[RMDB]
RNA sequence: GGGAACGACUCGAGUAGAGUCGAAAAGAAUCCAGCGCAUCGAUAUCGGCGGUGAGCCGGAAGAGAAGCCGCGCCGGGCGUUUCAAAAGUGCAUGCGCUGCGGAAGGCUGCGCCCAGCUACGGAAGACGUGCCUCAUUUAUUCGUAAAUGAGGCACGAAAAGAAACAACAACAACAAC
Reactivity to 2A3 in 0.01 (KOAc 150mM, MgCl2 10mM, bicine 150mM(pH8.5), 24C), signal-to-noise 1, nucleotides 027 to 126: g080a000a070u090c010c000a000g020c000g010c000a030u010c040g100a100u080a080u250c030g030g020c050g000g180u220g030a070g010c000c000g030g060a080a020g050a010g020a030a000g000c000c050g020c030g000c040c040g070g070g050c040g000u180u200u110c060a040a040a000a020g080u080g090c040a020u030g010c030g060c000u000g030c040g110g050a150a000g200g040c060u060g000c060g000c000c030c010a040g020c030u090a030c020g010g100a030a000g040a000
Reactivity to DMS in 0.01 (KOAc 150mM, MgCl2 10mM, bicine 150mM(pH8.5), 24C), signal-to-noise 2, nucleotides 027 to 126: g000a240a150u000c020c020a060g020c010g010c010a030u000c020g000a210u000a050u000c060g000g010c000g000g020u010g020a200g020c000c050g000g010a110a090g000a170g020a080a120g010c040c030g000c300g020c060c050g000g000g000c000g000u010u000u000c060a060a100a060a090g020u010g030c090a030u000g020c020g010c030u000g000c060g010g010a090a090g010g010c030u000g010c080g000c000c050c020a120g000c040u000a070c090g030g030a080a120g000a110

Source information
Structure probing data (2A3 and DMS) for a 177-nucleotide construct. It was measured as part of the RMDB library OK2TST.